Structure probing data (2A3) for a 177-nucleotide construct. The reactions ran in a buffer of 150 mM KOAc, 10 mM MgCl2 and 150 mM bicine (pH 8.5), at 24 C. The 2A3 profile rests on 329 reads. It was measured as part of the RMDB library RFM100. Reactivities are given for positions 27 through 126.
RNA sequence: GGGAACGACUCGAGUAGAGUCGAAAACAUAUUAGUUUGAACAAUCGGCACAUUUUUGAUGUGUGAAUUAUGAGAAAUUUUAUGCACGAAUCGUAUAUCAUACGACAGUCCAUCAAAGUUUCUGACCGCCACUUAUGGACUUCGGUCCAUAAGUGGCAAAAGAAACAACAACAACAAC
Reactivity to 2A3 in 0.01 (KOAc 150mM, MgCl2 10mM, bicine 150mM(pH8.5), 24C), signal-to-noise 1, nucleotides 027 to 126: c000a000u130a190u040u130a090g000u190u000u100g070a010a000c040a100a090u040c000g100g110c000a030c000a000u000u030u030u080u300g170a040u090g000u000g000u040g090a110a110u000u220a080u180g180a140g080a040a040a040u000u000u000u000a000u000g000c090a000c080g000a040a000u000c000g000u010a170u040a000u090c190a070u050a110c040g020a030c000a000g010u000c070c000a050u010c120a030a030a030g000u020u020u020c000u000g000a010c000c050